[RMDB]
RNA sequence: GGGAACGACUCGAGUAGAGUCGAAAAGCUUAAAGCUUCGGCUUUAAGCAAAAAAGCGUACUACCUACUGCUAAUAUUCGGAGUCCCAAAUAGGACGCGAAACGAAUACUAGCAUCAGGUAGGUAUCGCAAAAAACCACCAGGUUCGCCUGGUGGAACUUUCAAUUGUUCUUCGGAACAAUUGAAAGAAAAGAAACAACAACAACAAC
Reactivity to DMS in 0.01 (KOAc 150mM, MgCl2 10mM, bicine 150mM(pH8.5), 24C), signal-to-noise 1, nucleotides 027 to 156: g000c000u000u000a000a010a000g000c000u000u000c300g130g000c000u000u000u040a010a010g010c000a000a030a050a060a080a100g010c030g040u010a040c040u010a010c000c000u000a060c040u000g010c030u000a020a030u000a010u000u010c030g020g010a230g000u000c000c000c000a030a110a240u030a030g000g000a010c020g020c040g010a130a130a230c020g030a030a050u010a010c000u000a020g000c010a010u000c010a020g000g000u000a000g030g010u010a010u000c000g040c020a000a060a050a040a140a100c000c020a030c000c010a030g000g040u000u010c300g040c000c000u000g000g030u000g010g000a010a010
Reactivity to 2A3 in 0.01 (KOAc 150mM, MgCl2 10mM, bicine 150mM(pH8.5), 24C), signal-to-noise 1, nucleotides 027 to 156: g000c000u000u000a030a010a030g000c030u070u130c270g030g000c000u020u010u030a010a020g030c000a000a000a060a000a120a000g010c020g010u020a030c010u000a000c000c000u010a060c050u010g000c000u010a000a030u010a010u000u010c010g020g020a030g010u020c000c010c010a090a220a090u280a070g000g000a000c010g030c080g160a120a120a000c010g010a010a000u000a000c000u000a000g000c000a030u070c080a020g010g000u010a010g010g000u010a070u130c050g000c000a030a030a000a000a000a200c000c000a010c000c000a000g060g040u030u050c190g120c100c000u000g000g000u000g000g000a010a010